[RMDB]
RNA sequence: GGGAACGACUCGAGUAGAGUCGAAAAGACCUUCAGUUCGCUGAAGGUCGAUGAUGGUAAGAGAGUUUACCAUCUGUUAAGUGAUAUGGAUAAGAUCUCUCAGUGAACGUGCUUUCGAGCACGUUAAGCACUAGAAGGAAUUCGUUCCUUCUAGUGCAAAAGAAACAACAACAACAAC
Reactivity to DMS in 0.01 (KOAc 150mM, MgCl2 10mM, bicine 150mM(pH8.5), 24C), signal-to-noise 6, nucleotides 027 to 126: g000a010c000c000u000u000c000a000g010u000u020c230g040c010u000g010a000a000g010g000u000c000g000a020u010g000a010u000g000g010u000a020a030g010a160g010a120g020u010u000u000a010c000c000a010u000c000u000g000u000u020a090a100g000u010g010a060u000a060u010g000g010a130u010a090a090g000a120u000c010u000c020u000c040a170g010u010g000a030a010c000g010u000g010c000u000u000u010c210g020a010g010c000a000c000g000u000u000a030a120
Reactivity to 2A3 in 0.01 (KOAc 150mM, MgCl2 10mM, bicine 150mM(pH8.5), 24C), signal-to-noise 7, nucleotides 027 to 126: g000a000c000c000u010u000c010a040g010u020u110c140g020c100u000g000a000a000g000g000u000c000g000a000u000g000a000u000g010g020u020a070a010g090a030g010a040g070u040u030u030a020c000c000a000u000c010u030g130u100u170a150a110g070u060g140a060u070a070u250g180g040a070u070a190a090g040a090u020c020u000c010u000c050a060g060u030g210a010a000c010g000u000g000c000u090u080u120c240g060a010g000c000a000c000g000u010u010a010a000